[RMDB]
RNA sequence: GGGAACGACUCGAGUAGAGUCGAAAACUUCCCACUGAGGGUUUCCCGGCGUAAGUUCCUGAACAAUUUGCGGAAAUUGGUGUGGGUCGUAUUGUCCCCCCCUCUCCGCCAGAUUGAGGCGAGUAGGGCCAUCUCUUUAAUUCGUUAAAGAGAUGGCAAAAGAAACAACAACAACAAC
Reactivity to 2A3 in 0.01 (KOAc 150mM, MgCl2 10mM, bicine 150mM(pH8.5), 24C), signal-to-noise 9, nucleotides 027 to 126: c020u020u030c000c010c000a010c030u060g060a050g040g040g020u010u050u050c000c010c010g050g010c030g040u080a100a080g030u020u040c000c020u050g040a040a020c030a060a070u040u030u090g020c030g020g080a030a070a090u140u140g040g000u080g040u160g050g020g000u020c030g030u080a170u110u220g070u050c020c000c010c010c000c000c000u010c000u020c030c020g020c020c010a050g030a110u150u190g080a090g060g020c020g000a030g040u130a070g050g040
Reactivity to DMS in 0.01 (KOAc 150mM, MgCl2 10mM, bicine 150mM(pH8.5), 24C), signal-to-noise 5, nucleotides 027 to 126: c240u010u000c000c000c000a100c120u000g000a090g010g010g020u000u000u010c010c010c030g010g000c060g010u000a070a140g000u000u000c010c020u010g010a120a120c100a060a050u000u000u010g020c060g000g000a030a030a070u000u010g000g010u010g020u010g000g000g000u000c030g010u000a080u010u010g010u000c000c000c000c030c030c000c080u000c020u000c030c030g000c050c030a050g010a140u020u020g010a130g000g000c030g000a080g010u010a040g000g000

Record summary
Structure probing data (2A3 and DMS) for a 177-nucleotide construct. For 2A3 the reverse transcriptase was SuperScript II with manganese. For DMS the reverse transcriptase was MarathonRT. It was measured as part of the RMDB libraries RFM100 and RFMREP.